[RMDB]
RNA sequence: GGGAACGACUCGAGUAGAGUCGAAAAGGUGGAGUGGAACACCCCUGGCACAACAACGAGAUUCUACAAGCCUCUGUAGAUGGUCCAGGUAAGUGUCUAAAAUCACUUGGCCUCUUCCUGUACCAUCCGCCACUGAAAUUUUCGAAUUUCAGUGGCGAAAAGAAACAACAACAACAAC
Reactivity to DMS in 0.01 (KOAc 150mM, MgCl2 10mM, bicine 150mM(pH8.5), 24C), signal-to-noise 2, nucleotides 027 to 126: g000g050u000g020g000a030g040u000g000g030a080a100c030a060c020c100c020c000u000g020g070c120a100c040a040a060c100a050a080c120g000a080g000a180u000u000c050u000a080c130a000a170g000c160c070u000c030u000g030u000a120g000a010u000g000g000u010c030c030a000g000g000u000a060a070g020u000g020u000c080u010a030a030a110a150u020c080a030c070u000u010g020g000c000c020u000c050u000u050c000c050u000g020u010a040c070c040a030u000c050
Reactivity to 2A3 in 0.01 (KOAc 150mM, MgCl2 10mM, bicine 150mM(pH8.5), 24C), signal-to-noise 1, nucleotides 027 to 126: g050g010u110g070g060a010g030u020g010g070a140a020c000a030c000c000c000c000u030g070g050c090a020c020a280a000c010a040a010c060g060a030g020a140u040u130c010u080a050c000a140a050g000c000c030u170c110u100g000u040a030g010a050u050g010g000u000c040c000a000g030g000u040a060a000g000u000g020u000c030u100a020a000a040a120u130c060a030c110u010u020g060g000c000c020u000c000u010u000c000c000u000g120u120a050c030c010a070u000c000
Notes:
The data come from the RNA Mapping Database (RMDB), library OK2TRN. Chemical mapping of a 177-nucleotide RNA with DMS and 2A3. 2A3 adducts were read by reverse transcription with SuperScript II with manganese. For 2A3, 1,233 sequencing reads were counted. For DMS the reverse transcriptase was MarathonRT.